[RMDB]
RNA sequence: GGGAACGACUCGAGUAGAGUCGAAAAACAGUGAUUACAGUUCAUUCUUAAGAUUGACAUGUGAGACUAGGAAAAAUGUCAGAAGAUAUAAGACCACAGAAAAUCCUGUAGGCAAGUUUCACCAAAACUACGUGAUCUAGUUCGCUAGAUCACGUAGAAAAGAAACAACAACAACAAC
Reactivity to 2A3 in 0.01 (KOAc 150mM, MgCl2 10mM, bicine 150mM(pH8.5), 24C), signal-to-noise 2, nucleotides 027 to 126: a000c040a010g000u020g070a100u030u080a020c030a050g040u060u030c010a040u070u030c020u100u170a130a110g020a160u030u130g010a050c040a060u090g020u030g070a060g020a060c050u060a060g050g100a030a140a030a010a010u040g020u020c000a020g050a190a010g020a070u050a010u010a190a040g040a020c030c000a020c040a030g120a060a130a010a020u040c030c030u020g020u030a080g050g010c010a050a030g000u040u030u030c040a030c010c030a070a050a070a040
Reactivity to DMS in 0.01 (KOAc 150mM, MgCl2 10mM, bicine 150mM(pH8.5), 24C), signal-to-noise 2, nucleotides 027 to 126: a060c070a020g020u000g000a130u000u000a110c090a060g000u000u010c060a030u040u000c030u000u000a060a110g010a090u000u000g010a070c060a090u000g010u000g010a110g010a060c090u010a080g040g030a090a090a020a130a030u000g020u010c040a100g020a050a060g000a170u010a120u000a060a030g000a110c070c140a030c110a140g000a100a110a040a050u010c020c020u000g000u000a080g000g000c110a030a100g020u000u000u000c060a060c090c070a020a040a110a170